[RMDB]
RNA sequence: GGGAACGACUCGAGUAGAGUCGAAAAGAUAUGGACGUAAUGGGACAUGAGUCCUCGGAAACGAGACUCAACAGCCCAUACGUCCUAAGUCAAAAGCCUUGGGAGAUGUUCGCAUCUCCCAAGGCAACAAAGGAACAGACUUCGGUCUGUUCCUUUGAAAAGAAACAACAACAACAAC
Reactivity to DMS in 0.01 (KOAc 150mM, MgCl2 10mM, bicine 150mM(pH8.5), 24C), signal-to-noise 3, nucleotides 027 to 126: g000a030u000a250u000g000g000a010c000g000u000a100a050u000g010g000g000a070c070a250u000g000a000g010u000c170c050u000c000g000g000a050a050a110c000g000a020g010a030c000u000c000a030a040c250a220g000c000c010c000a000u000a010c000g000u000c000c000u000a020a050g000u000c010a090a090a140a090g000c000c000u000u010g010g010g010a000g010a010u000g000u010u010c220g010c020a000u000c000u000c000c000c000a000a000g000g010c000a010a010
Reactivity to 2A3 in 0.01 (KOAc 150mM, MgCl2 10mM, bicine 150mM(pH8.5), 24C), signal-to-noise 1, nucleotides 027 to 126: g010a000u060a010u080g000g000a010c000g040u010a300a290u020g000g000g070a040c130a170u030g000a010g000u100c080c110u000c040g000g010a000a010a000c000g020a020g000a000c000u010c000a050a050c020a040g050c000c000c010a000u000a020c000g020u000c000c000u000a010a010g020u010c010a020a200a090a000g000c010c000u020u010g010g060g030a000g040a000u010g020u160u210c300g040c170a000u000c000u000c000c000c000a000a000g000g010c000a000a010